[RMDB]
RNA sequence: GGGAACGACUCGAGUAGAGUCGAAAAUAACCCCUAUACUUGUAUAGGCGAUUAAUAAAUCUUCUGUAAAUGCUGUAAGAGGAUUACCCCUUGAGCUUUCAGCACUAGGCUGCUCUAGCGAUUAAUCACAACGAUUUGGUCUUCGGACCAAAUCGAACUGAUAGUAUUUGUUCGCAAAUACUAUCAGAAAAGAAACAACAACAACAAC
Reactivity to 2A3 in 0.01 (KOAc 150mM, MgCl2 10mM, bicine 150mM(pH8.5), 24C), signal-to-noise 4, nucleotides 027 to 156: u040a030a070c020c000c000c000u020a010u020a090c060u140u190g040u060a040u030a030g010g030c020g040a040u020u140a070a070u120a140a130a040u010c040u070u010c010u060g180u200a120a170a160u200g070c050u080g090u160a060a020g010a000g030g000a010u020u070a050c000c010c030c000u030u040g020a000g030c000u060u180u170c050a010g000c020a020c080u100a050g170g050c030u030g010c000u030c010u070a000g020c000g050a040u070u160a050a050u120c040a020c030a190a080c040g000a000u000u000u000g000g000u000c000u020u060c230g070g000a000c000c000a000a010a000u000c000g000a020a020
Reactivity to DMS in 0.01 (KOAc 150mM, MgCl2 10mM, bicine 150mM(pH8.5), 24C), signal-to-noise 2, nucleotides 027 to 156: u010a060a080c040c020c010c000u010a020u000a000c050u000u000g030u000a030u000a040g020g050c080g050a050u000u020a030a150u000a080a070a080u000c020u010u000c020u000g000u010a160a070a080u000g030c060u010g000u000a110a020g010a060g010g000a170u010u000a110c040c010c000c050u010u000g000a110g040c060u000u000u020c030a060g040c040a050c050u010a090g000g040c000u000g020c030u020c060u000a150g010c010g000a160u000u000a060a180u000c070a050c040a150a300c010g010a020u000u000u000g000g010u000c010u010u000c300g090g000a030c000c010a020a000a000u010c000g000a000a050
The record gives the reactivity of an RNA of 207 nucleotides to 2A3 and DMS.
The DMS profile rests on 2,506 reads.
The data come from the RNA Mapping Database (RMDB), library M2RFPK.
For DMS the reverse transcriptase was MarathonRT.